[RMDB]
Structure probing data (2A3 and DMS) for a 177-nucleotide construct.

RNA sequence: GGGAACGACUCGAGUAGAGUCGAAAAAUGAGCGUUUGGGAGAGCUGAUUCUGCAGCCCAGAGAGUAGUCUCAGGGCAUCCUCUGGAGCCUGACCUGUGAUCGUCGCAUCAUAGACCGCCAGUAGACAGUCCCUCAUAUAUUCGUAUAUGAGGGACUAAAAGAAACAACAACAACAAC
Reactivity to 2A3 in 0.01 (KOAc 150mM, MgCl2 10mM, bicine 150mM(pH8.5), 24C), signal-to-noise 8, nucleotides 027 to 126: a000u140g010a020g010c040g020u050u070u100g040g020g000a070g000a020g030c040u030g020a090u130u000c030u100g040c070a030g010c000c000c020a010g010a000g000a010g040u240a060g050u020c020u020c070a060g030g020g000c010a060u030c010c010u010c030u030g030g010a020g050c010c040u040g030a080c010c000u040g010u040g040a050u020c040g110u070c050g100c040a010u000c010a020u050a040g040a030c010c030g030c030c020a030g030u060a030g060a060c030
Reactivity to DMS in 0.01 (KOAc 150mM, MgCl2 10mM, bicine 150mM(pH8.5), 24C), signal-to-noise 7, nucleotides 027 to 126: a070u010g000a070g000c040g020u000u000u000g000g010g010a080g000a100g020c040u000g000a090u000u010c060u020g020c080a110g010c020c000c010a080g010a070g000a080g000u030a120g010u010c010u010c070a110g010g000g010c010a060u020c040c020u000c030u000g010g010a110g010c070c040u020g000a070c120c040u000g010u000g000a030u010c050g010u020c120g010c070a050u010c040a030u010a050g000a100c060c040g000c030c030a060g000u020a050g000a110c220
Notes
The RNA was probed in 150 mM KOAc, 10 mM MgCl2 and 150 mM bicine (pH 8.5) at 24 C.